[RMDB]
RNA sequence: GGGAACGACUCGAGUAGAGUCGAAAAUGUCAUGGCAGUUAAGGGAGUACUUCGUCAUCACAGAGUACUUGAUCAAAACACACUAUGUCCCGUUGUUCAAGGGACUGACGAUGGCAGAUGACCUUACGCUAUGCACCCAAUUCGUUGGGUGCAUAGCAAAAGAAACAACAACAACAAC
Reactivity to 2A3 in 0.01 (KOAc 150mM, MgCl2 10mM, bicine 150mM(pH8.5), 24C), signal-to-noise 3, nucleotides 027 to 126: u040g010u020c000a010u020g080g040c040a120g030u100u100a090a070g040g040g010a040g030u030a030c030u060u110c050g060u050c040a110u040c030a070c030a050g050a010g030u040a060c000u000u030g030a050u050c030a000a080a060a040c080a000c020a020c080u090a090u220g020u000c040c010c000g040u100u140g070u050u050c080a090a090g000g040g050a060c000u010g040a020c100g030a020u020g010g020c030a060g010a060u040g050a030c000c010u020u110a010c050
Reactivity to DMS in 0.01 (KOAc 150mM, MgCl2 10mM, bicine 150mM(pH8.5), 24C), signal-to-noise 4, nucleotides 027 to 126: u010g010u020c010a070u000g000g040c060a080g030u000u000a070a150g000g010g020a140g000u000a050c040u020u000c100g010u000c090a060u010c080a170c100a050g000a080g020u020a060c040u000u000g020a080u020c060a060a040a040a030c100a040c160a120c180u010a070u020g010u000c000c010c010g000u000u000g010u000u000c100a050a080g010g010g010a070c010u000g010a060c100g000a040u000g010g020c030a060g000a090u000g000a130c000c000u000u000a050c190
The record gives the reactivity of an RNA of 177 nucleotides to 2A3 and DMS. For 2A3, 2,680 sequencing reads were counted. The DMS profile rests on 3,196 reads. Conditions: 150 mM KOAc, 10 mM MgCl2 and 150 mM bicine (pH 8.5), 24 C. The data come from the RNA Mapping Database (RMDB), library OK2TRN. Values cover nucleotides 27 to 126. 2A3 adducts were read by reverse transcription with SuperScript II with manganese.